Record summary
An RNA of 177 nucleotides, treated with DMS and 2A3 and read out base by base. Values cover nucleotides 27 to 126. DMS adducts were read by reverse transcription with MarathonRT. Reactivities are rounded to 0.1 and cut off at 0 and 3. The RNA was probed in 150 mM KOAc, 10 mM MgCl2 and 150 mM bicine (pH 8.5) at 24 C. Source: RMDB libraries RFM100 and RFMREP, as collected in RNAgym.
RNA sequence: GGGAACGACUCGAGUAGAGUCGAAAAAUUACCGGACUCACAAAACCCAACCACAAGUUCGGUUGGUGCGUCUGUCCGGGUCGGGGCGCGUAAGCCGCCCAACCUCAUCCCGUUCCCUCGCGGAACACGUCUAAUAUAUUUUCGAAUAUAUUAGACGAAAAGAAACAACAACAACAAC
Reactivity to DMS in 0.01 (KOAc 150mM, MgCl2 10mM, bicine 150mM(pH8.5), 24C), signal-to-noise 9, nucleotides 027 to 126: a070u030u020a110c020c010g000g000a020c000u010c300a030c010a050a080a100a230c110c000c000a000a010c000c000a050c080a210a130g000u030u000c170g010g000u000u000g000g000u000g000c110g000u010c150u000g000u000c000c000g010g010g010u010c160g020g000g000g010c000g000c010g020u020a130a120g010c220c030g010c000c000c010a050a040c060c070u010c110a140u000c010c000c000g030u000u000c000c000c010u020c240g010c110g000g000a050a050c160a180
Reactivity to 2A3 in 0.01 (KOAc 150mM, MgCl2 10mM, bicine 150mM(pH8.5), 24C), signal-to-noise 9, nucleotides 027 to 126: a000u140u100a060c000c000g000g000a000c000u010c020a000c010a010a040a060a010c030c000c000a010a000c010c000a030c060a260a090g150u180u120c050g030g000u000u000g000g000u010g000c000g010u010c020u020g000u000c000c000g000g000g000u020c080g020g000g000g000c020g000c040g110u190a110a070g040c080c010g000c000c010c000a020a040c010c020u080c020a100u040c010c010c010g000u010u010c020c010c010u070c130g050c180g030g010a020a010c030a020